[RMDB]
RNA sequence: GGGAACGACUCGAGUAGAGUCGAAAAGGCAGCGAAUUCGUUCGCUGCCAAUACAGGACGUGGAGCCGGCUUCACGGCGCACGUCGAUGACGGCCGGGCCGGAGAAUCCAGAUUUCGAUCUGGAUAAGCAACAACACUGAUUCGUCAGUGUUGUUGCAAAAGAAACAACAACAACAAC
Reactivity to DMS in 0.01 (KOAc 150mM, MgCl2 10mM, bicine 150mM(pH8.5), 24C), signal-to-noise 1, nucleotides 027 to 126: g010g010c010a010g030c000g000a000a020u000u010c190g010u000u000c000g010c000u000g000c010c010a010a010u020a150c140a120g000g000a040c070g010u000g040g000a180g000c000c000g020g000c160u010u010c110a160c070g030g000c000g020c070a060c030g020u000c000g000a020u000g020a050c000g020g000c070c060g030g000g000c030c000g000g020a140g000a090a080u000c000c000a010g000a040u000u000u000c120g010a000u000c000u010g000g000a000u000a000a110
Reactivity to 2A3 in 0.01 (KOAc 150mM, MgCl2 10mM, bicine 150mM(pH8.5), 24C), signal-to-noise 1, nucleotides 027 to 126: g010g000c000a010g000c000g020a000a040u080u070c230g070u130u030c000g030c010u000g000c000c000a000a010u000a000c000a010g110g030a000c010g090u050g040g050a030g040c010c000g040g050c090u230u150c170a080c160g000g000c020g030c010a040c030g000u000c000g000a100u150g040a010c010g040g000c030c100g070g030g000c020c010g110g010a080g060a000a020u000c000c000a000g000a000u040u090u190c250g040a000u000c000u010g000g000a000u000a030a030

An RNA of 177 nucleotides, treated with DMS and 2A3 and read out base by base. Reactivities are given for positions 27 through 126. Conditions: 150 mM KOAc, 10 mM MgCl2 and 150 mM bicine (pH 8.5), 24 C.